[RMDB]
The data come from the RNA Mapping Database (RMDB), library ARCHII. An RNA of 207 nucleotides, treated with 2A3 and DMS and read out base by base.

RNA sequence: GGGAACGACUCGAGUAGAGUCGAAAAUAAAAGCAGCUAACCCCUAGUGGCCUCAGUCGAUAGGGCUGAGAGACUGCGACACUGUCAAAUUGCCGGGAACUCCUGCUAAGCUGUUGAUACCGCUGACUCAGGGAAACCUUAGCUCAGCACCGAGGGGCAUACUAUUUUGGUUCGCCAAAAUAGUAUGAAAAGAAACAACAACAACAAC
Reactivity to 2A3 in 0.01 (KOAc 150mM, MgCl2 10mM, bicine 150mM(pH8.5), 24C), signal-to-noise 4, nucleotides 027 to 156: u150a010a060a010a020g000c000a000g000c030u050a040a040c010c000c010c000u010a040g030u040g050g000c010c000u020c000a010g020u010c040g140a300u180a300g230g000g000c010u020g000a010g010a010g010a030c010u010g010c000g030a010c020a030c070u120g010u120c030a040a120a180u130u090g020c050c040g020g000g060a150a120c010u070c050c000u010g000c030u030a040a020g010c010u010g000u100u030g030a030u050a140c050c060g000c010u000g010a010c000u010c050a010g000g010g000a050a050a070c000c000u000u020a000g000c040u010c000a000g000c010a030c040c040g040a130g000g010g000g000
Reactivity to DMS in 0.01 (KOAc 150mM, MgCl2 10mM, bicine 150mM(pH8.5), 24C), signal-to-noise 3, nucleotides 027 to 156: u010a070a070a070a160g040c020a030g030c020u010a120a170c060c010c020c020u010a120g020u010g000g020c030c010u010c010a040g030u000c000g000a170u000a120g020g020g020c000u000g010a080g020a150g010a090c020u000g010c020g000a140c040a070c050u000g000u010c070a030a090a170u000u000g020c020c040g000g000g010a100a130c050u000c030c000u000g030c030u000a100a170g020c010u010g020u000u000g010a120u040a090c030c040g030c010u000g020a060c070u000c060a090g000g010g000a180a090a120c010c020u000u000a040g020c080u000c050a050g000c020a080c070c040g000a080g020g020g000g020